[RMDB]
RNA sequence: GGGAACGACUCGAGUAGAGUCGAAAAGUUAGGAGCAGGAAGACAUCCAUAACAUGCUACAUUAAUAAAGGAGUUCUCAGGGCUACCAACCUUACAGUAGAGGUUGAGUAGUAGUAUAUUUCUCUUAGUGUCUUAGUCGGUUCGCCGACUAAGACACAAAAGAAACAACAACAACAAC
Reactivity to 2A3 in 0.01 (KOAc 150mM, MgCl2 10mM, bicine 150mM(pH8.5), 24C), signal-to-noise 1, nucleotides 027 to 126: g000u000u050a000g000g000a010g110c030a020g110g160a040a000g020a160c060a020u050c000c000a050u020a010a000c040a020u210g090c030u120a070c000a060u100u210a020a060u160a090a000a040g020g000a000g000u040u000c050u050c000a130g050g000g000c000u000a000c000c000a020a020c040c000u040u070a020c050a120g300u300a030g040a000g020g000u000u000g060a010g030u000a020g000u000a000g050u000a000u000a020u080u020u000c070u000c000u000u000a050